[RMDB]
RNA sequence: GGGAACGACUCGAGUAGAGUCGAAAAGUGCAGAUGAAGGGCCGCGGCACCCGCAAAUGCCGGGAAACGGGCAAGGAGUUCUACAAACUCGUGGACUUUGUGGACAUCACACGGCUUGAACCUGUCAAGUCGUGUAUUAGUUCGCUAAUACACGACUAAAAGAAACAACAACAACAAC
Reactivity to DMS in 0.01 (KOAc 150mM, MgCl2 10mM, bicine 150mM(pH8.5), 24C), signal-to-noise 9, nucleotides 027 to 126: g010u000g010c010a030g010a070u000g010a190a180g000g000g010c020c030g020c030g010g020c110a130c060c010c040g020c100a060a060a100u000g020c060c010g010g000g000a050a130a100c070g000g000g010c040a090a120g000g000a080g010u000u010c070u010a070c110a060a080a070c100u000c040g010u000g010g010a110c120u000u000u000g010u000g000g000a050c080a090u000c100a070c040a040c030g000g000c010u000u000g000a100a090c160c040u000g010u000c070a080
Reactivity to 2A3 in 0.01 (KOAc 150mM, MgCl2 10mM, bicine 150mM(pH8.5), 24C), signal-to-noise 7, nucleotides 027 to 126: g090u070g000c010a000g010a080u070g040a150a050g020g010g000c010c010g030c010g020g000c020a030c000c010c010g000c010a110a200a080u140g030c060c000g000g000g020a080a100a020c060g020g050g030c020a020a020g080g010a030g020u080u030c030u090a050c030a050a140a070c050u070c100g100u100g050g010a040c030u020u030u030g020u020g000g020a030c020a100u080c010a030c010a010c040g000g000c000u030u040g010a040a070c010c010u040g040u080c040a050